[RMDB]
RNA sequence: GGGAACGACUCGAGUAGAGUCGAAAAGUGGGGGGCGACCGGAACGAGGAGAAAAGUAAAGAGAGCAACGGGGCUAGCGAGUGGAUGUUCCGCCUCCCCGGGGAGCCGAGUGAGGCUUAUCCCGGAGCAUAAACAUAGAGUUCGCUCUAUGUUUAUGAAAAGAAACAACAACAACAAC
Reactivity to 2A3 in 0.01 (KOAc 150mM, MgCl2 10mM, bicine 150mM(pH8.5), 24C), signal-to-noise 2, nucleotides 027 to 126: g070u080g000g020g000g020g000g000c020g010a020c030c020g020g030a030a020c020g010a020g050g020a050g080a040a090a010a000g050u110a050a110a030g090a010g010a000g010c010a010a050c030g000g020g020g000c020u020a030g030c020g040a020g030u050g040g040a060u080g020u040u000c020c020g040c010c010u020c000c000c010c000g010g000g000g000a000g000c000c030g020a040g090u190g070a070g000g010c000u010u020a090u040c000c000c010g000g000a010g030
Reactivity to DMS in 0.01 (KOAc 150mM, MgCl2 10mM, bicine 150mM(pH8.5), 24C), signal-to-noise 5, nucleotides 027 to 126: g030u010g000g010g010g000g000g020c060g020a090c120c030g000g000a070a060c070g000a100g020g000a120g000a060a070a080a090g010u010a060a080a120g010a100g010a080g010c060a060a070c080g010g010g000g010c080u010a060g010c050g000a080g000u010g010g020a100u010g000u000u010c030c010g010c040c020u000c010c020c000c010g010g000g000g010a030g020c010c000g000a150g020u010g010a110g010g010c010u000u000a080u010c000c000c000g010g010a120g010
Annotation
Chemical mapping of a 177-nucleotide RNA with 2A3 and DMS. DMS adducts were read by reverse transcription with MarathonRT. 2A3 adducts were read by reverse transcription with SuperScript II with manganese. It was measured as part of the RMDB library 15KREP.